[RMDB]
RNA sequence: GGGAACGACUCGAGUAGAGUCGAAAAAUUGGCUCAUUCUCAGGUCGGGCGAGGGUCCUCAGUUCUCUCUAUUCUUUCUUUUUGAAAGAGGAGACUGCUGGACCAAACGCCCGAACCGGGAUGAGCCUGGCACAUUGGUUCGCCAAUGUGAAAAGAAACAACAACAACAAC
Reactivity to DMS in 0.01 (KOAc 150mM, MgCl2 10mM, bicine 150mM(pH8.5), 24C), signal-to-noise 9, nucleotides 027 to 129: a070u060u020g000g020c000u000c020a000u030u010c030u020c050a130g020g020u000c030g010g000g010c010g020a130g040g030g020u010c000c010u030c020a030g000u070u010c000u000c010u020c140u040a170u040u030c000u010u000u000c010u020u060u010u060u050g000a010a020a010g020a050g010g010a020g000a030c000u010g030c130u010g010g010a020c020c010a010a030a050c000g000c000c010c010g000a010a010c000c010g000g020g030a010u020g000a020g000c000c020u030g000g020
Reactivity to 2A3 in 0.01 (KOAc 150mM, MgCl2 10mM, bicine 150mM(pH8.5), 24C), signal-to-noise 9, nucleotides 027 to 129: a000u100u110g000g000c000u000c000a020u160u020c080u030c100a100g010g000u000c000g000g000g000c000g000a070g050g030g020u000c000c000u010c010a070g010u300u050c030u000c020u000c040u080a240u150u020c000u040u020u010c020u050u300u110u130u300g000a010a000a000g010a010g000g010a000g000a000c000u010g040c060u020g000g000a000c000c000a010a010a000c000g000c000c000c000g010a010a010c000c000g000g010g000a000u000g000a000g000c000c000u000g010g000
The data come from the RNA Mapping Database (RMDB), library 15KLIB.
An RNA of 170 nucleotides, treated with DMS and 2A3 and read out base by base.
DMS adducts were read by reverse transcription with MarathonRT.
The 2A3 profile rests on 133,410 reads.